RNA sequence: GGGAACGACUCGAGUAGAGUCGAAAAAAGGGUGAAGGCUUUAUCCAUUUUCAGGAAAUCAUUCUACAUUAUACUAAGCAUAAUUGAAGCAUUUUUAAUGAUUCAGUGUAAUCACUACCUAUAUUAGUUAUUCUACUGAUGGUCUCAGUGGUUAUUAUGCAUCAAAAUGAUUCGUCAUUUUGAUGCAAAAAGAAACAACAACAACAAC
Reactivity to DMS in 0.01 (KOAc 150mM, MgCl2 10mM, bicine 150mM(pH8.5), 24C), signal-to-noise 3, nucleotides 027 to 156: a080a060g040g000g040u000g020a070a090g000g020c020u000u010u000a090u010c020c020a180u000u000u010u000c070a110g020g010a040a070a070u000c050a070u010u000c030u010a100c050a180u000u000a090u000a090c070u000a070a110g020c050a090u010a070a060u010u000g010a010a030g010c030a020u000u000u000u020u010a050a060u010g020a040u000u000c020a060g050u010g030u000a060a070u000c020a040c030u000a050c030c030u000a120u010a110u000u020a060g000u000u000a080u010u000c100u000a100c060u010g000a050u010g010g010u000c080u000c060a050g050u000g030g000u000u010a050u000u000a140
Reactivity to 2A3 in 0.01 (KOAc 150mM, MgCl2 10mM, bicine 150mM(pH8.5), 24C), signal-to-noise 4, nucleotides 027 to 156: a000a000g080g000g000u060g050a050a010g030g000c000u070u120u070a040u030c020c010a050u100u040u030u120c060a030g050g020a030a050a070u050c020a030u080u060c040u100a060c010a060u030u190a060u070a110c060u080a050a070g030c020a070u060a110a050u120u080g050a020a000g000c000a040u010u000u040u060u300a110a060u080g050a050u060u030c010a020g070u010g030u120a000a010u020c030a010c040u020a030c010c020u070a070u060a090u300u030a040g020u030u020a070u170u040c030u030a040c000u010g010a040u070g060g050u030c030u010c100a000g000u010g000g030u030u010a030u090u040a050